[RMDB]
RNA sequence: GGGAACGACUCGAGUAGAGUCGAAAAAAAGCAUUAUCAAUGUGGAUGACUUUGAAAUGUGGCAUUGUAAACUUACCAUACGGUGGUGGUAAGGGUGGUAUCGUUUGUGAUCCACGUCAAAUGAGCAACUCCACGGAUAUUUCGAUAUCCGUGGAGUAAAAGAAACAACAACAACAAC
Reactivity to DMS in 0.01 (KOAc 150mM, MgCl2 10mM, bicine 150mM(pH8.5), 24C), signal-to-noise 3, nucleotides 027 to 126: a080a050a070g010c020a040u030u000a050u010c090a030a040u020g030u000g000g000a110u000g000a050c010u000u020u000g010a040a020a020u000g020u020g010g020c070a080u010u000g000u020a070a080a090c000u030u010a010c000c040a010u000a070c120g020g020u020g000g050u000g020g010u010a000a020g000g010g010u000g000g010u020a010u020c080g000u020u050u010g000u010g010a060u010c010c000a020c000g010u030c080a060a040a050u020g000a160g010c140a080
Reactivity to 2A3 in 0.01 (KOAc 150mM, MgCl2 10mM, bicine 150mM(pH8.5), 24C), signal-to-noise 3, nucleotides 027 to 126: a000a000a000g020c040a080u070u070a120u120c040a030a080u050g070u080g170g000a100u090g030a080c000u060u060u030g080a050a060a030u120g020u030g010g040c020a040u000u090g060u110a060a040a050c010u000u010a000c000c000a010u060a100c120g130g140u230g030g030u090g010g010u090a050a000g050g000g040u040g000g030u060a020u090c050g050u020u070u160g090u060g030a040u000c020c000a010c010g000u010c010a040a110a050u130g040a020g020c050a000
About this RNA:
An RNA of 177 nucleotides, treated with DMS and 2A3 and read out base by base. The 2A3 profile rests on 2,788 reads. For DMS, 5,374 sequencing reads were counted. For DMS the reverse transcriptase was MarathonRT. Values cover nucleotides 27 to 126.